[RMDB]
RNA sequence: GGGAACGACUCGAGUAGAGUCGAAAAUGCAUGACAGCGUCAGGACUGACGCGGGCCUGGCCGUCUGGCGUGCCAUUAACGACCAGCGCACCGUGGUGAUCAGCGAGCUUAAGCUGGCGACGGAAGCUCCACCUUCCCCGUUCGCGGGGAAGGUGGAAAAAGAAACAACAACAACAAC
Reactivity to 2A3 in 0.01 (KOAc 150mM, MgCl2 10mM, bicine 150mM(pH8.5), 24C), signal-to-noise 1, nucleotides 027 to 126: u110g000c050a020u040g020a030c000a020g000c000g030u000c000a010g020g030a060c000u110g040a160c110g070c050g080g000g030c000c000u000g000g000c000c140g090u100c040u020g010g000c110g080u050g000c010c000a000u020u030a120a000c000g040a060c030c050a030g050c030g000c040a010c020c010g000u030g020g040u020g120a300u190c000a000g040c090g050a030g000c020u130u070a060a000g020c050u010g020g010c020g000a030c000g000g050a120a030g020c000